The record gives the reactivity of an RNA of 207 nucleotides to DMS and 2A3. Source: RMDB library OK3TST, as collected in RNAgym. Conditions: 150 mM KOAc, 10 mM MgCl2 and 150 mM bicine (pH 8.5), 24 C. For DMS, 5,722 sequencing reads were counted. 2A3 is a SHAPE reagent: it acylates the 2'-hydroxyl of flexible nucleotides of all four kinds.
[RMDB]
RNA sequence: GGGAACGACUCGAGUAGAGUCGAAAAGUCACGGUGAACCGUUCGGCGACAUCUCCCGCGCCGCUACCAGUUUAUGUAUGGAUACUCACACGUAACGCAUGAGCAAGAACAUCGCGAUCAGCGACGACGUGUACCGCCGACUGAAACGCGAGAAAGGCAGAGUUAAAAAGUUCGCUUUUUAACUCUGAAAAGAAACAACAACAACAAC
Reactivity to DMS in 0.01 (KOAc 150mM, MgCl2 10mM, bicine 150mM(pH8.5), 24C), signal-to-noise 3, nucleotides 027 to 156: g020u000c060a060c040g060g040u020g020a080a090c040c030g000u000u010c030g030g010c000g000a070c040a050u000c080u010c010c000c000g000c070g020c010c010g000c050u010a070c070c020a110g000u010u000u010a070u030g020u010a100u000g030g020a210u000a030c030u010c020a020c030a070c070g020u000a110a110c070g040c050a060u000g010a070g050c070a080a100g020a070a120c060a120u000c020g020c000g000a300u000c010a030g000c000g030a100c000g020a030c030g040u000g010u000a150c070c030g000c000c000g030a080c020u010g000a020a040a110c040g030c010g010a090g000a070a050a130g020g010
Reactivity to 2A3 in 0.01 (KOAc 150mM, MgCl2 10mM, bicine 150mM(pH8.5), 24C), signal-to-noise 6, nucleotides 027 to 156: g060u070c020a010c070g060g020u120g080a130a130c040c040g030u070u070c030g030g020c010g020a030c020a100u070c070u020c050c010c010g000c000g010c010c010g020c030u050a070c030c040a040g010u030u050u050a080u100g110u020a060u100g080g040a080u070a110c050u080c070a040c020a010c120g030u050a070a010c040g020c040a050u090g010a010g030c030a050a070g030a100a050c030a100u050c020g000c000g040a040u050c010a010g020c010g070a040c040g020a020c070g090u110g070u130a060c030c010g000c000c010g060a190c010u000g020a070a120a030c000g020c010g020a030g050a070a020a010g070g000